[RMDB]
RNA sequence: GGGAACGACUCGAGUAGAGUCGAAAAGGUGUUUAUCGCACGGUUCCACCAGUGUGAGAAGGCUCCGGUGGAUUGCUCUAUUGGUUUGGGCUGUGUAAUGGUUGCGCGCUGAGGGUAUAACCAUUGGCUAAAUAUUAUAAUUCGUUAUAAUAUUUAGAAAAGAAACAACAACAACAAC
Reactivity to 2A3 in 0.01 (KOAc 150mM, MgCl2 10mM, bicine 150mM(pH8.5), 24C), signal-to-noise 5, nucleotides 027 to 126: g080g000u050g010u080u190u110a130u070c040g000c010a010c010g010g020u150u100c000c000a000c010c000a020g000u030g010u020g050a060g040a070a030g090g010c010u020c050c030g050g000u030g010g030a020u010u150g010c010u000c010u020a030u020u090g050g000u050u100u080g030g010g000c030u000g000u000g010u080a020a050u070g030g010u010u030g010c050g000c010g000c060u030g050a050g040g040g010u060a060u040a050a010c010c000a040u040u050g020g000
Reactivity to DMS in 0.01 (KOAc 150mM, MgCl2 10mM, bicine 150mM(pH8.5), 24C), signal-to-noise 6, nucleotides 027 to 126: g010g020u010g000u000u000u020a080u010c060g010c010a020c020g000g010u010u030c050c210a060c030c020a060g020u020g010u010g010a050g010a210a120g000g000c040u010c050c060g010g020u010g010g010a060u010u010g010c020u000c020u000a040u010u010g010g010u000u020u010g000g000g010c020u010g010u000g000u010a050a060u010g000g000u000u000g010c060g010c040g020c070u010g010a090g010g010g010u000a050u020a060a050c030c030a080u000u010g000g000
Structure probing data (2A3 and DMS) for a 177-nucleotide construct. For DMS the reverse transcriptase was MarathonRT. Reactivities are rounded to 0.1 and cut off at 0 and 3. The RNA was probed in 150 mM KOAc, 10 mM MgCl2 and 150 mM bicine (pH 8.5) at 24 C. 2A3 adducts were read by reverse transcription with SuperScript II with manganese.